[RMDB]
RNA sequence: GGGAACGACUCGAGUAGAGUCGAAAAUGAUGCUCGCAGCCCCGAGGGGGUUCUGUGAGGGUGUCACCAGGGCGAUCGACACCGUUGAGGCGGCCAUCAAGAUCUGGGGAGCGCCCGUCUAUGUGAACACAUGUUGGCACUUCGGUGCCAACAUGUGAAAAGAAACAACAACAACAAC
Reactivity to DMS in 0.01 (KOAc 150mM, MgCl2 10mM, bicine 150mM(pH8.5), 24C), signal-to-noise 1, nucleotides 027 to 126: u010g000a060u000g010c020u000c000g010c010a130g030c300c020c000c030g040a080g030g000g010g010g010u000u000c030u000g000u000g000a040g020g000g000u000g000u000c020a070c110c060a090g000g000g000c020g000a070u020c050g000a010c020a020c030c000g010u000u000g020a090g020g030c040g010g000c070c030a030u000c000a090a220g000a070u010c040u000g000g000g010g000a150g010c070g000c010c000c010g000u000c060u010a120u000g000u000g000a050a230
The record gives the reactivity of an RNA of 177 nucleotides to DMS. DMS adducts were read by reverse transcription with MarathonRT. Reactivities are rounded to 0.1 and cut off at 0 and 3. Reactivities are given for positions 27 through 126. Source: RMDB library OK2TRN, as collected in RNAgym.